The data come from the RNA Mapping Database (RMDB), library OK2TRN. Chemical mapping of a 177-nucleotide RNA with DMS and 2A3. The RNA was probed in 150 mM KOAc, 10 mM MgCl2 and 150 mM bicine (pH 8.5) at 24 C. The DMS profile rests on 2,632 reads.
[RMDB]
RNA sequence: GGGAACGACUCGAGUAGAGUCGAAAAUACAUGAGUGACUAGUAUCAUGUCUAGAUCCAUGGUACCUAUGCUAGGCAGCUGACAUGGAUCCGGUACUACUCGAUCGCUAUAUCAUGGUACUGGAUCGGACGUAGAAUCCUUUCGAGGAUUCUACGUCAAAAGAAACAACAACAACAAC
Reactivity to DMS in 0.01 (KOAc 150mM, MgCl2 10mM, bicine 150mM(pH8.5), 24C), signal-to-noise 3, nucleotides 027 to 126: u010a120c080a020u000g010a120g000u010g000a080c090u000a070g000u010a070u000c040a040u000g010u000c170u000a090g020a090u010c080c020a050u000g000g020u000a050c110c100u000a030u000g010c070u000a080g000g000c090a060g040c040u000g000a090c060a030u010g020g000a000u000c020c010g000g010u000a060c010u000a030c240u000c170g010a010u010c160g020c260u000a070u000a170u000c020a090u000g010g000u000a020c000u000g000g000a030u000c030g000
Reactivity to 2A3 in 0.01 (KOAc 150mM, MgCl2 10mM, bicine 150mM(pH8.5), 24C), signal-to-noise 3, nucleotides 027 to 126: u200a000c070a030u100g020a010g110u120g070a080c010u020a040g040u040a060u130c020a030u060g030u030c070u080a060g020a050u000c020c000a010u020g030g010u090a100c010c040u130a080u190g010c020u050a020g150g000c030a030g010c010u030g120a040c000a030u060g090g000a010u010c000c010g020g000u000a010c000u000a020c030u030c110g020a020u030c060g010c290u080a030u030a020u300c000a010u040g010g000u010a000c020u020g050g000a060u020c010g040
For 2A3 the reverse transcriptase was SuperScript II with manganese.